[RMDB]
RNA sequence: GGGAACGACUCGAGUAGAGUCGAAAAGAUAUGGAAAUUACAAUAGUGCCUAUGGUGGUGAUCAAAACUAUAGUGGCUAUGGCGGAUAUGAUUAUACUGGGUAUAACUAUGGGAACUAUGGAUAUGGACAGGGAUAUGCAGACUACAGUGGUAAGAACCGUCUAGUAUCGUUCGCGAUACUAGACGGAAAAGAAACAACAACAACAAC
Reactivity to 2A3 in 0.01 (KOAc 150mM, MgCl2 10mM, bicine 150mM(pH8.5), 24C), signal-to-noise 1, nucleotides 027 to 156: g000a000u040a060u170g000g040a040a070a120u180u050a160c100a160a090u070a060g050u110g160c010c010u080a030u040g000g030u000g020g020u130g060a070u020c060a050a050a000a000c010u020a020u070a120g050u060g020g000c020u000a010u200g050g000c020g000g000a000u030a040u290g140a080u050u120a100u120a150c010u050g000g080g060u110a060u020a130a020c070u020a020u080g010g000g000a000a000c000u020a030u180g010g020a020u050a020u060g030g030a000c010a050g040g040g000a000u020a000u060g020c000a020g000a000c020u020a010c020a080g000u040g010g000u010a020a170g000a000a080